[RMDB]
RNA sequence: GGGAACGACUCGAGUAGAGUCGAAAAUGCGUCCUCCUUCGGAUGCCCAGGUCGGACCGCGAGGAGGUGGAGAUGCCAUGCCGACCCGAAGAGGAAAGAAGGACAGGAGACGCGAACCUGUGAGUGGGAUAACAUUCAUGUUCGCAUGAAUGUUAUCAAAAGAAACAACAACAACAAC
Reactivity to 2A3 in 0.01 (KOAc 150mM, MgCl2 10mM, bicine 150mM(pH8.5), 24C), signal-to-noise 5, nucleotides 027 to 126: u110g000c010g000u000c000c010u000c010c000u010u030c010g130g040a120u220g050c010c010c010a030g000g030u030c000g000g020a070c020c020g030c060g020a120g080g050a080g060g030u070g040g060a210g030a050u270g030c010c010a040u140g030c000c000g010a010c000c010c020g120a150a080g100a110g020g050a030a040a020g020a020a010g020g010a020c100a080g030g070a160g020a020c010g010c010g020a050a070c010c000u040g050u100g100a100g060u190g020g120
Reactivity to DMS in 0.01 (KOAc 150mM, MgCl2 10mM, bicine 150mM(pH8.5), 24C), signal-to-noise 6, nucleotides 027 to 126: u010g010c010g010u000c000c030u000c020c010u000u000c010g010g020a210u010g000c020c010c020a080g000g020u000c010g020g000a190c040c120g010c170g010a120g010g010a100g000g020u000g010g010a140g010a120u010g010c010c030a080u010g000c010c000g000a030c020c000c060g000a080a070g010a110g000g000a060a140a160g000a050a040g010g000a060c220a070g000g000a090g010a040c030g000c040g010a070a100c010c020u000g010u000g010a090g010u010g010g010